Structure probing data (2A3 and DMS) for a 207-nucleotide construct. 2A3 is a SHAPE reagent: it acylates the 2'-hydroxyl of flexible nucleotides of all four kinds. DMS adducts were read by reverse transcription with MarathonRT. For 2A3 the reverse transcriptase was SuperScript II with manganese. Values cover nucleotides 27 to 156. The reactions ran in a buffer of 150 mM KOAc, 10 mM MgCl2 and 150 mM bicine (pH 8.5), at 24 C.
RNA sequence: GGGAACGACUCGAGUAGAGUCGAAAAUCAGACCUGGCUUUUCACCCCUGAUCAACUCAAACACCCAAGAAAGACUCGUUUAAGUUUAGCAGUUCUAGUGCCAAAUUCUUGGAAGAGUACAUUUGAUCAAGACAGAUGUCCUCCCUGUGCCAGGUUAUCACUAUUAGGCUUUCGAGCCUAAUAGUGAAAAAGAAACAACAACAACAAC
Reactivity to 2A3 in 0.01 (KOAc 150mM, MgCl2 10mM, bicine 150mM(pH8.5), 24C), signal-to-noise 2, nucleotides 027 to 156: u060c010a000g040a030c000c000u000g000g000c050u110u120u160u290c130a200c000c000c000c010u020g000a030u010c020a020a030c010u010c030a070a170a020c070a130c080c000c010a010a000g020a010a070a010g090a030c020u040c110g160u090u140u230a170a100g040u060u120u170a080g040c090a040g030u150u100c010u170a030g090u060g170c000c010a000a110a180u020u010c000u020u010g010g050a080a060g000a040g010u070a070c020a140u110u110u030g020a020u040c040a010a010g040a010c030a010g130a130u190g090u070c000c030u040c020c020c000u040g000u010g010c000c000a000g010g020u000u000a000
Reactivity to DMS in 0.01 (KOAc 150mM, MgCl2 10mM, bicine 150mM(pH8.5), 24C), signal-to-noise 2, nucleotides 027 to 156: u000c060a080g020a030c000c010u010g000g010c000u000u010u010u010c040a080c030c020c050c170u000g000a010u010c020a060a080c060u000c010a040a100a080c070a160c090c000c020a020a080g010a100a080a200g000a040c020u000c050g020u000u000u000a030a070g010u000u000u000a040g000c050a100g030u000u010c160u010a130g030u000g030c000c020a050a070a170u000u000c010u000u010g000g010a110a160g010a050g010u000a060c060a080u010u010u010g010a050u000c040a070a060g000a100c040a070g000a110u000g000u000c050c050u000c010c020c040u000g020u020g020c000c010a010g010g000u000u000a050